[RMDB]
RNA sequence: GGGAACGACUCGAGUAGAGUCGAAAAAACGUUGCAUGAUCGUAAAACAUGCCCGGCUUACCGUGAGCCGCCUUUGAAAGAAAGGUUUACACGGACUCUGUUGCGUUACGCACGUACCUAGCUUGUGAAAACGGCAUCUUGUUCGCAAGAUGCCGAAUCUCAUGUACAUCUUCGGAUGUACAUGAGAAAAAGAAACAACAACAACAAC
Reactivity to DMS in 0.01 (KOAc 150mM, MgCl2 10mM, bicine 150mM(pH8.5), 24C), signal-to-noise 1, nucleotides 027 to 156: a100a090c010g010u010u000g000c000a010u000g030a140u040c040g020u010a050a030a050a080c020a040u000g010c020c050c050g020g000c010u000u010a090c030c080g000u000g020a100g020c000c020g030c000c000u000u010u000g020a070a190a250g000a040a000a030g000g040u000u000u000a120c000a040c040g030g000a140c140u010c090u000g010u000u000g020c010g020u000u000a100c150g000c050a060c080g010u010a040c070c020u030a130g000c050u000u000g050u040g000a140a040a060a240c020g010g000c000a000u000c020u000u000g060u000u010c300g000c000a040a000g000a020u000g020c020c000g000a000a020
Reactivity to 2A3 in 0.01 (KOAc 150mM, MgCl2 10mM, bicine 150mM(pH8.5), 24C), signal-to-noise 4, nucleotides 027 to 156: a000a000c000g000u000u000g000c000a000u000g020a040u180c060g070u220a010a140a010a010c000a010u000g000c000c000c000g000g000c000u020u070a120c010c010g000u000g000a000g000c000c000g010c000c000u020u010u010g060a100a040a010g030a000a020a000g020g010u020u020u060a010c000a000c000g050g010a040c050u060c040u100g090u110u020g010c010g030u040u050a070c260g020c030a010c000g020u010a020c010c020u040a050g100c060u110u090g080u030g150a060a070a010a030c000g000g000c000a000u000c000u000u010g020u060u050c090g010c120a010a000g000a000u000g020c000c000g000a000a000
Structure probing data (DMS and 2A3) for a 207-nucleotide construct. As a SHAPE reagent, 2A3 marks flexible, mostly unpaired nucleotides at the ribose 2'-OH. For DMS the reverse transcriptase was MarathonRT. Values are in units of 0.01, from 0 to 300, in steps of 10. For 2A3 the reverse transcriptase was SuperScript II with manganese.